[RMDB]
RNA sequence: GGGAACGACUCGAGUAGAGUCGAAAAUUGCCGCCAGCGCCCCAGCUUUGUCGAUCGUCAGCGCGAAACGGCAUGGCGGCAACACUGUCGCGAUCAACCCGAUAGCGCUCGCCGAUGACGAUGCCGCAUGCUCACUACGAUUCGUCGUAGUGAGCAUAAAAGAAACAACAACAACAAC
Reactivity to 2A3 in 0.01 (KOAc 150mM, MgCl2 10mM, bicine 150mM(pH8.5), 24C), signal-to-noise 3, nucleotides 027 to 126: u040u060g000c000c000g000c000c010a040g010c010g000c030c000c010c000a020g020c030u000u060u130g070u070c090g110a150u030c040g120u060c020a040g040c020g000c000g050a130a170a010c000g030g000c030a000u020g020g020c000g010g000c000a010a000c020a020c070u060g000u040c010g020c030g050a100u040c010a020a110c010c000c000g070a070u120a060g020c020g000c000u010c070g050c030c020g030a010u030g020a060c000g020a020u050g020c020c030g050c040
Reactivity to DMS in 0.01 (KOAc 150mM, MgCl2 10mM, bicine 150mM(pH8.5), 24C), signal-to-noise 2, nucleotides 027 to 126: u000u030g000c000c060g010c040c020a040g000c130g050c010c010c030c040a170g010c000u070u040u000g000u020c000g010a090u000c120g000u000c020a090g000c060g020c060g000a110a050a130c130g000g000c100a010u040g000g000c000g020g000c000a060a040c270a150c110u020g000u000c030g000c000g000a000u010c170a090a110c300c010c000g000a050u000a290g000c010g000c000u000c170g010c020c030g050a000u000g000a040c000g000a110u040g030c040c040g040c060